[RMDB]
RNA sequence: GGGAACGACUCGAGUAGAGUCGAAAACGGAUUAGGCGUGGAGGCGAAAGUCACCCUCCUCGCAUCGCAAGUUCGUGCUUGCGACUUAAACGUAGGGCGAGGGGUGGGCGAAAGUUGCCAUGAGACCAAAAUAUGUAGUUCUUCGGAACUACAUAAACAGGAAGUUGAAAUUCGUUUCAACUUCCUGAAAAGAAACAACAACAACAAC
Reactivity to DMS in 0.01 (KOAc 150mM, MgCl2 10mM, bicine 150mM(pH8.5), 24C), signal-to-noise 2, nucleotides 027 to 156: c060g000g010a150u020u000a080g030g000c040g040u000g000g000a080g000g020c040g010a110a070a170g010u010c060a110c030c010c010u000c000c010u000c010g040c040a070u000c000g030c010a040a010g000u000u000c300g040u000g000c000u000u000g000c020g010a040c070u000u000a090a080a130c070g010u010a120g000g000g000c030g000a020g000g010g000g000u000g000g000g030c060g000a080a090a160g030u000u000g010c000c040a120u000g020a120g000a140c030c020a040a090a130a170u000a010u010g010u000a010g000u000u010c000u000u020c300g040g000a000a000c000u000a000c000a010u000a010a060a180
Reactivity to 2A3 in 0.01 (KOAc 150mM, MgCl2 10mM, bicine 150mM(pH8.5), 24C), signal-to-noise 7, nucleotides 027 to 156: c020g050g040a110u100u130a090g020g060c020g000u010g030g010a020g020g020c080g080a140a040a020g090u090c060a100c030c000c000u020c010c000u010c000g000c000a000u000c000g000c000a000a000g030u220u300c150g160u300g090c000u000u000g010c000g000a010c010u060u140a120a050a030c040g100u070a100g000g100g030c050g010a050g000g020g010g030u180g030g000g000c040g020a100a050a020g030u030u050g020c020c020a030u060g040a040g020a070c020c030a090a030a000a050u060a010u000g000u000a000g020u000u010c000u020u020c160g030g010a000a000c000u000a000c000a000u000a010a040a000